An RNA of 177 nucleotides, treated with DMS and 2A3 and read out base by base.
For DMS, 1,710 sequencing reads were counted.
Source: RMDB library OK2TST, as collected in RNAgym.
2A3 adducts were read by reverse transcription with SuperScript II with manganese.
DMS adducts were read by reverse transcription with MarathonRT.
The RNA was probed in 150 mM KOAc, 10 mM MgCl2 and 150 mM bicine (pH 8.5) at 24 C.
RNA sequence: GGGAACGACUCGAGUAGAGUCGAAAAGUCGGUUCGACCGCGCUGUUUGUCGCGACGGCGCGAGCGCUGGAAGCCCAGAAGUCCGACCCGCUGGUCGUCGACCCAUAUGCGGAGGCGUUCUGCCGUGAGCUAGUACCGCUUUCGAGCGGUACUAGCUAAAAGAAACAACAACAACAAC
Reactivity to DMS in 0.01 (KOAc 150mM, MgCl2 10mM, bicine 150mM(pH8.5), 24C), signal-to-noise 2, nucleotides 027 to 126: g000u000c020g000g030u020u010c030g000a050c030c020g020c020g000c010u010g010u000u000u020g010u020c130g030c090g010a040c070g010g000c010g030c030g000a040g000c030g040c040u000g020g020a280a140g030c040c030c040a090g000a180a110g000u010c010c020g000a090c060c040c130g030c070u000g000g030u000c040g030u000c070g000a090c010c030c060a130u000a090u000g020c050g000g000a140g000g010c030g000u020u000c040u000g010c050c090g010u020g000
Reactivity to 2A3 in 0.01 (KOAc 150mM, MgCl2 10mM, bicine 150mM(pH8.5), 24C), signal-to-noise 2, nucleotides 027 to 126: g010u030c010g000g080u070u150c080g010a090c050c000g010c020g000c010u020g080u100u090u110g300u150c090g000c050g050a000c020g000g050c010g000c030g030a010g000c040g030c020u040g120g070a150a110g030c020c010c010a040g040a050a000g060u000c040c000g020a030c040c020c000g120c100u100g000g040u010c030g010u040c060g060a160c000c000c000a200u220a060u280g080c060g010g020a010g020g020c000g000u010u000c040u050g030c000c010g090u060g070